Notes
This 207-nucleotide RNA was probed chemically with 2A3. Conditions: 150 mM KOAc, 10 mM MgCl2 and 150 mM bicine (pH 8.5), 24 C. It was measured as part of the RMDB library M2RFPK.
RNA sequence: GGGAACGACUCGAGUAGAGUCGAAAAGGCACGCCUUUAGAAGAAGAGGCUAGGUGGUAUUCCGGUGUGGGAUACUUGGUAAUAUGUAACGCUAAUUGCAUAAGAUUGUAGGACGGAAUUUACAGUCAAAACGGUCCUGCGUUCGCGCAGGACCGAACAAGGUUGCUAUCUUCGGAUAGCAACCUUGAAAAGAAACAACAACAACAAC
Reactivity to 2A3 in 0.01 (KOAc 150mM, MgCl2 10mM, bicine 150mM(pH8.5), 24C), signal-to-noise 2, nucleotides 027 to 156: g040g000c000a000c050g000c000c000u110u080u080a130g010a230a000g020a000a020g000a040g030g000c040u040a040g040g110u050g000g000u030a080u000u060c020c070g080g090u250g010u150g100g000g000a030u040a060c010u000u110g030g010u090a050a070u040a080u150g030u040a070a000c040g010c170u080a130a000u090u100g000c000a010u040a050a080g000a080u060u080g010u040a040g000g030a020c040g020g060a020a000u140u050u050a120c040a020g070u040c010a040a050a050a030c000g000g000u000c000c030u030g030c020g020u020u020c210g010c000g000c060a000g000g000a000c000c000g000a000a000